Structure probing data (DMS) for a 177-nucleotide construct. The RNA was probed in 150 mM KOAc, 10 mM MgCl2 and 150 mM bicine (pH 8.5) at 24 C.
RNA sequence: GGGAACGACUCGAGUAGAGUCGAAAAAUUUGCUGAUAAGGAUGGCACUCUUGCCAGCACCCAUCGGGGGUCUCAAUUAUCUUAACAUGAGCAGGUUAUUUGUGAGAAAUAUCGGUGACCCGGUCACCACUGCCCGGUUAUUCGUAACCGGGCAGUGAAAAGAAACAACAACAACAAC
Reactivity to DMS in 0.01 (KOAc 150mM, MgCl2 10mM, bicine 150mM(pH8.5), 24C), signal-to-noise 1, nucleotides 027 to 126: a090u000u010u010g020c030u010g000a050u000a020a040g000g000a080u000g000g010c040a230c170u000c010u000u000g000c030c030a060g020c000a110c070c010c010a110u010c140g000g000g000g000g000u000c020u000c010a110a080u010u010a040u000c060u030u000a060a080c070a060u000g000a050g010c120a020g000g010u020u000a070u000u000u000g040u000g000a080g000a080a080a060u020a030u010c050g000g000u000g000a050c010c060c060g040g000u000c040a040c060
For DMS the reverse transcriptase was MarathonRT. The DMS profile rests on 944 reads.